This 177-nucleotide RNA was probed chemically with DMS.
RNA sequence: GGGAACGACUCGAGUAGAGUCGAAAAAUCAUGACGAAGAAAGGACGAGAGCAAGCUGAGAGGCAAGCUGAGAGCCAAGCUCAAAGAAAGGAGCGUCCAACUCCUUACCCUCGUCUUUUAAAAAGAAUCCCUAGUAUGUCUUCGGACAUACUAGGGAAAAAGAAACAACAACAACAAC
Reactivity to DMS in 0.01 (KOAc 150mM, MgCl2 10mM, bicine 150mM(pH8.5), 24C), signal-to-noise 1, nucleotides 027 to 126: a130u000c060a070u000g000a070c100g020a180a060g000a020a010a030g000g010a020c000g010a020g050a010g000c010a090a200g000c040u000g000a260g070a140g010g030c090a190a190g000c000u000g000a270g000a100g000c060c140a020a220g000c000u000c000a030a200a070g000a110a130a020g000g000a010g060c030g000u030c240c130a010a110c000u000c000c010u000u000a170c040c170c000u000c010g000u000c000u000u000u000u000a010a040a000a040a060g000a130a140